[RMDB]
RNA sequence: GGGAACGACUCGAGUAGAGUCGAAAACGGGGCAUCCUUAUCCAUAACACGAUCUUUGGGGAGCAGGUGUUCCUGCCCCUGGAACACUCGCAAUUCAGUCGGUAUCGCUGGCGCGGACCCACGGCGGUCGCUGUAGGUAGUUCGCUACCUACAGCGAAAAAGAAACAACAACAACAAC
Reactivity to DMS in 0.01 (KOAc 150mM, MgCl2 10mM, bicine 150mM(pH8.5), 24C), signal-to-noise 1, nucleotides 027 to 126: c090g010g030g010g010c020a100u000c030c010u010u030a030u010c040c120a070u020a070a110c120a110c140g000a080u010c040u000u000u010g000g000g000g000a230g010c050a040g010g010u000g010u000u010c000c000u000g020c000c020c000c030u030g010g000a010a010c020a030c020u010c060g020c060a190a080u010u010c060a070g000u000c070g000g040u000a050u000c100g030c020u000g020g030c130g010c040g040g000a080c040c060c020a030c080g030g000c070g010g010
Reactivity to 2A3 in 0.01 (KOAc 150mM, MgCl2 10mM, bicine 150mM(pH8.5), 24C), signal-to-noise 1, nucleotides 027 to 126: c010g000g000g050g010c020a030u060c050c040u100u110a090u020c070c040a080u080a090a100c150a010c080g040a090u040c030u040u150u060g000g000g040g040a040g050c020a020g040g010u030g020u020u000c000c010u020g000c030c000c010c020u000g000g000a000a000c000a000c020u050c020g030c020a020a090u180u090c010a040g030u020c000g130g080u090a040u150c040g000c000u000g110g010c030g010c030g090g050a030c050c020c020a010c030g010g010c070g000g060